Annotation
Conditions: 150 mM KOAc, 10 mM MgCl2 and 150 mM bicine (pH 8.5), 24 C. Chemical mapping of a 177-nucleotide RNA with 2A3 and DMS.

RNA sequence: GGGAACGACUCGAGUAGAGUCGAAAAAAUAUGCUCGUCAGGCUGCCUGUCCGACAGAGCUUUUAGAUCUUCUGAUCUUUCCCUGCAGCAUAUCGCUUAUGCAUCAAGCGAUUGUCGGAUCACACAAUCAUGUUCAUCUUUUCGAAGAUGAACAUGAAAAAGAAACAACAACAACAAC
Reactivity to 2A3 in 0.01 (KOAc 150mM, MgCl2 10mM, bicine 150mM(pH8.5), 24C), signal-to-noise 6, nucleotides 027 to 126: a000a000u290a060u090g010c010u000c010g100u060c050a050g030g030c010u030g080c030c060u090g070u030c000c000g000a010c020a070g020a010g000c000u010u020u010u020a010g000a010u010c000u270u050c160u300g000a010u000c000u000u010u000c000c000c000u010g030c030a040g000c010a020u030a010u150c000g000c020u030u040a070u200g160c050a090u140c090a030a000g010c000g010a010u000u030g030u020c020g020g020a080u100c030a020c010a010c020a070a110
Reactivity to DMS in 0.01 (KOAc 150mM, MgCl2 10mM, bicine 150mM(pH8.5), 24C), signal-to-noise 9, nucleotides 027 to 126: a090a080u010a060u010g010c010u000c010g010u000c090a100g010g000c010u000g000c090c180u010g010u000c010c010g000a020c020a100g010a020g010c010u000u000u000u000a020g000a010u000c010u010u010c300u010g000a010u000c000u000u000u000c000c000c010u010g010c060a060g010c020a070u010a030u000c010g010c010u000u000a080u010g020c250a130u010c130a030a010g010c000g010a010u000u000g010u000c020g010g010a110u010c180a090c150a080c220a080a110
In probing experiments dimethyl sulfate is read out at A N1 and C N3, which are open when not base-paired.